[RMDB]
RNA sequence: GGGAACGACUCGAGUAGAGUCGAAAAGAUAUGGAACUCCCAGUUUCAACAGCCCAGAAUCGGAAACGAUUCAUGGGACAUGAAACGGGAGUUCCUAAGUCAAAAGGGUUGUCUUCGGACAACCCAACUUUUACAUGUACUUCGGUACAUGUAAAAGAAAAGAAACAACAACAACAAC
Reactivity to DMS in 0.01 (KOAc 150mM, MgCl2 10mM, bicine 150mM(pH8.5), 24C), signal-to-noise 4, nucleotides 027 to 126: g000a020u000a100u010g000g000a000a010c000u000c010c000c010a160g040u000u000u000c000a120a070c250a140g000c000c000c000a020g000a020a010u000c000g010g010a040a030a040c000g010a020u000u000c000a080u000g010g010g010a010c030a300u010g000a010a010a020c010g000g000g000a010g000u010u000c000c000u000a000a030g000u000c010a110a100a150a120g010g000g000u000u000g010u000c000u000u010c210g030g020a020c000a000a000c000c000c000a010a000
Reactivity to 2A3 in 0.01 (KOAc 150mM, MgCl2 10mM, bicine 150mM(pH8.5), 24C), signal-to-noise 3, nucleotides 027 to 126: g000a010u030a010u070g000g010a000a000c000u000c000c010c020a020g010u030u000u020c240a300a110c060a090g010c020c000c000a000g020a000a000u010c000g010g020a030a000a000c030g010a000u020u010c030a070u030g000g010g030a010c030a180u300g000a000a000a010c000g000g020g000a000g000u000u010c000c000u000a000a000g000u000c000a030a020a070a120g010g000g000u000u000g000u010c010u060u160c300g130g000a000c000a000a000c000c000c000a010a000